[RMDB]
RNA sequence: GGGAACGACUCGAGUAGAGUCGAAAAUAUGCUUGGUUAGUUUACCAAAGUUCUUGGGUCUCAUGAUAGCUUUGUUUUUUUGAGAUGAAGUCUUGCUCUGUUGCCCAGGCUAGAGUGCAGUGGCACAGUCGUUAUGGUAUUUCGAUACCAUAACGACAAAAGAAACAACAACAACAAC
Reactivity to 2A3 in 0.01 (KOAc 150mM, MgCl2 10mM, bicine 150mM(pH8.5), 24C), signal-to-noise 2, nucleotides 027 to 126: u270a100u120g020c020u050u020g060g010u110u070a140g050u230u200u130a070c000c030a020a080a030g060u160u020c000u070u030g000g040g040u000c000u010c010a010u190g020a010u030a020g010c020u040u050u040g010u040u040u000u010u020u120u270g180a090g010a030u040g020a040a000g000u070c020u090u050g010c030u000c000u020g020u000u040g020c000c000c000a010g000g000c030u110a070g000a000g190u030g000c000a060g120u120g120g010c010a000c020a040
Reactivity to DMS in 0.01 (KOAc 150mM, MgCl2 10mM, bicine 150mM(pH8.5), 24C), signal-to-noise 4, nucleotides 027 to 126: u010a080u000g000c060u000u000g010g000u000u000a100g010u000u000u010a060c030c010a050a080a120g010u000u000c030u010u000g010g010g000u000c020u000c020a020u010g010a060u010a050g010c040u000u000u010g020u000u000u000u010u010u010u000g010a060g010a030u010g000a030a040g010u000c050u010u000g020c100u000c050u000g010u000u010g010c010c020c010a040g010g000c150u000a060g000a110g020u000g000c010a140g020u010g000g000c010a040c110a130